An RNA of 177 nucleotides, treated with DMS and 2A3 and read out base by base. The 2A3 profile rests on 3,084 reads.
[RMDB]
RNA sequence: GGGAACGACUCGAGUAGAGUCGAAAAUGAAGCCAUUGGACGUUUCACCAGCACUCUCAAUAAACGCGUGCUGUUCCUGGGUUCCGGUGGGCUUUCCCAUCAGCCGCCGGUGCCCGAACUGGCGAAAAAGAUGAUCGUAUUUCGAUACGAUCAUCUUAAAAGAAACAACAACAACAAC
Reactivity to DMS in 0.01 (KOAc 150mM, MgCl2 10mM, bicine 150mM(pH8.5), 24C), signal-to-noise 4, nucleotides 027 to 126: u010g020a110a180g000c010c010a090u010u020g010g010a120c200g020u000u000u010c030a100c280c010a030g010c020a020c020u010c020u010c130a130a170u010a070a070a090c210g000c270g020u000g000c010u000g000u010u000c000c020u000g020g010g010u000u000c010c010g010g010u000g040g050g020c010u000u000u010c050c020c050a120u000c240a040g000c010c010g010c000c000g010g010u010g000c000c000c020g010a050a070c080u000g020g010c010g010a060a060a060
Reactivity to 2A3 in 0.01 (KOAc 150mM, MgCl2 10mM, bicine 150mM(pH8.5), 24C), signal-to-noise 2, nucleotides 027 to 126: u110g030a050a020g030c010c040a050u100u190g130g030a040c070g040u050u100u050c110a060c070c000a000g000c010a010c000u080c000u020c080a120a280u150a240a200a050c120g020c010g030u010g000c010u000g030u080u020c010c020u010g000g000g030u020u000c010c000g000g030u140g070g100g000c030u080u050u040c030c010c010a060u200c040a010g000c010c000g000c000c000g030g000u020g000c000c010c000g010a040a020c050u030g030g000c000g050a060a050a030
The reactions ran in a buffer of 150 mM KOAc, 10 mM MgCl2 and 150 mM bicine (pH 8.5), at 24 C.